[RMDB]
RNA sequence: GGGAACGACUCGAGUAGAGUCGAAAAUUCCCAAAAACAAAAGAAAAUGCCCACCGGGUGUGAAGCUGGUCAAAGAUCCGGCGUUUUAUCCGGUUAAGCCCAUACGGACAGGCGGGGCAGCUGCCGACGUGUAGUAGGUCUUCGGACCUGCUACACGAAAAGAAACAACAACAACAAC
Reactivity to DMS in 0.01 (KOAc 150mM, MgCl2 10mM, bicine 150mM(pH8.5), 24C), signal-to-noise 5, nucleotides 027 to 126: u010u010c000c000c010a040a070a100a090a120c200a090a070a100a100g020a110a070a120a060u020g010c010c010c000a100c000c010g000g000g010u010g010u000g010a050a090g010c000u010g000g010u020c120a120a140a140g000a080u040c000c000g010g010c010g000u000u010u030u030a000u010c000c000g000g000u000u050a090a070g010c000c000c010a090u020a080c010g000g000a020c020a160g000g000c010g000g000g000g020c000a050g010c150u040g000c000c000g010a300
Reactivity to 2A3 in 0.01 (KOAc 150mM, MgCl2 10mM, bicine 150mM(pH8.5), 24C), signal-to-noise 7, nucleotides 027 to 126: u010u000c000c000c000a020a020a000a010a010c030a020a030a010a000g200a030a140a020a020u060g000c000c000c000a000c010c000g010g000g010u020g050u040g040a050a000g000c000u010g010g020u120c120a250a130a070g050a070u080c010c010g010g000c000g010u110u150u070u060a000u020c000c000g000g030u010u020a040a000g000c000c000c010a080u090a090c000g010g010a010c010a010g000g010c010g000g000g000g000c000a000g000c010u070g000c010c010g040a080